[RMDB]
RNA sequence: GGGAACGACUCGAGUAGAGUCGAAAAAUCAGAAAUAGAUAUGGAAUGACUACCCACCAGUGCUCGUCCGUUGAAAUCGGAAACGAUGGAGGACAGCACUGAGGUCAUUCCUAAGUCAGAUGGAAAAUCCUCGACUAUAGUUCGCUAUAGUCGAGGAAAAAGAAACAACAACAACAAC
Reactivity to DMS in 0.01 (KOAc 150mM, MgCl2 10mM, bicine 150mM(pH8.5), 24C), signal-to-noise 1, nucleotides 027 to 126: a070u000c120a050g000a180a040a150u010a080g010a030u010a300u000g000g060a020a000u000g000a040c000u000a050c000c020c000a300c190c010a000g020u010g020c000u000c110g040u000c000c000g000u010u030g000a140a200a000u050c000g000g000a100a090a090c000g070a000u000g010g000a050g020g030a000c000a050g000c000a000c000u000g000a070g050g000u000c000a000u000u000c000c000u000a010a100g000u000c120a090g020a070u000g010g010a070a120a070a070
The record gives the reactivity of an RNA of 177 nucleotides to DMS. The RNA was probed in 150 mM KOAc, 10 mM MgCl2 and 150 mM bicine (pH 8.5) at 24 C. The DMS profile rests on 599 reads.